The record gives the reactivity of an RNA of 207 nucleotides to 2A3. 2A3 adducts were read by reverse transcription with SuperScript II with manganese. The RNA was probed in 150 mM KOAc, 10 mM MgCl2 and 150 mM bicine (pH 8.5) at 24 C. Values cover nucleotides 27 to 156.
RNA sequence: GGGAACGACUCGAGUAGAGUCGAAAACUACACAUUCAUCACAUUUCUGUCCCCAGUAGAGGGUACUGCUGAGUAAAACACUGCCAUUGUUGUUCAGAUCCUAUAGGUGGCAGCAGUUCCUACAGUUUCAGAGCAUAACAAUGGCUCGAUUUGUGGACAUCCUAUCGCGUUUCGACGCGAUAGGAUGAAAAGAAACAACAACAACAAC
Reactivity to 2A3 in 0.01 (KOAc 150mM, MgCl2 10mM, bicine 150mM(pH8.5), 24C), signal-to-noise 1, nucleotides 027 to 156: c060u110a040c050a010c000a080u120u100c030a090u050c000a050c000a090u060u050u030c070u110g070u010c050c000c000c000a050g030u120a010g040a190g080g010g000u170a010c010u020g020c000u010g020a030g050u120a000a030a040a000c090a040c040u030g000c000c000a000u000u010g060u000u000g020u060u040c030a030g000a030u040c000c020u060a020u030a100g050g040u030g010g010c030a020g000c030a010g020u000u000c010c010u000a040c020a020g020u000u000u060c020a010g010a010g000c010a050u060a140a060c040a080a080u030g000g000c000u000c040g000a020u010u010u060g080u030g030g020a020